[RMDB]
RNA sequence: GGGAACGACUCGAGUAGAGUCGAAAAAGUGGGAAUUCCGCCUUUAAUUUGAACUGGUUUACCGUACUUGGUGUUGCUUUGCCAGUCUCUUUGGGCCCCCAUGAAUUCUUUAAAGUGCUUUAGAUAACCCUGAGAGUGUAUUCGUACACUCUCAGGGAAAAGAAACAACAACAACAAC
Reactivity to DMS in 0.01 (KOAc 150mM, MgCl2 10mM, bicine 150mM(pH8.5), 24C), signal-to-noise 2, nucleotides 027 to 126: a090g000u020g010g000g000a080a050u010u010c120c120g000c020c000u020u030u020a080a060u000u040u000g000a110a050c030u020g000g000u000u020u030a020c050c000g040u010a140c300u020u060g000g010u000g020u050u020g030c120u010u010u000g000c030c000a000g000u000c040u000c040u000u020u020g000g010g000c010c090c000c040c020a100u020g020a110a040u000u000c030u000u000u030a090a110a070g000u010g010c050u000u010u000a140g000a110u020a060a170
Reactivity to 2A3 in 0.01 (KOAc 150mM, MgCl2 10mM, bicine 150mM(pH8.5), 24C), signal-to-noise 4, nucleotides 027 to 126: a000g050u050g000g010g030a060a130u300u090c120c070g020c000c030u080u130u070a150a090u010u070u110g040a050a020c000u020g000g060u090u180u180a040c040c030g030u080a090c110u220u140g090g080u170g040u150u200g030c110u120u220u060g000c000c010a000g000u000c000u010c000u110u000u030g010g000g000c010c000c020c000c000a000u000g010a020a080u040u000c000u030u190u070a110a180a060g120u120g070c040u090u040u020a100g030a130u070a070a040